Chemical mapping of a 177-nucleotide RNA with 2A3.
RNA sequence: GGGAACGACUCGAGUAGAGUCGAAAACUACGUAAAAAACUUCCUGUUGAUCGAUACGGGAGUGUACGCCCACGGCCACAGCCUGCGCUUGCCGUAUUUUGCCAAAAUCGCCCCCGACGGGCCUGCGGCGGAAUACGUCCUUCGGGACGUAUUCCGCAAAAGAAACAACAACAACAAC
Reactivity to 2A3 in 0.01 (KOAc 150mM, MgCl2 10mM, bicine 150mM(pH8.5), 24C), signal-to-noise 2, nucleotides 027 to 126: c030u050a000c050g170u110a000a040a010a100a080a000c010u130u120c000c010u040g120u050u150g100a150u090c110g060a030u020a120c040g030g000g000a060g000u040g000u040a000c060g040c000c000c020a040c010g060g000c000c000a020c010a040g040c010c000u030g000c050g050c010u060u070g170c020c000g050u000a240u080u010u040u090g090c000c000a060a180a020a030u090c050g000c000c000c000c000c030g080a030c030g000g020g020c010c050u040g000c030g050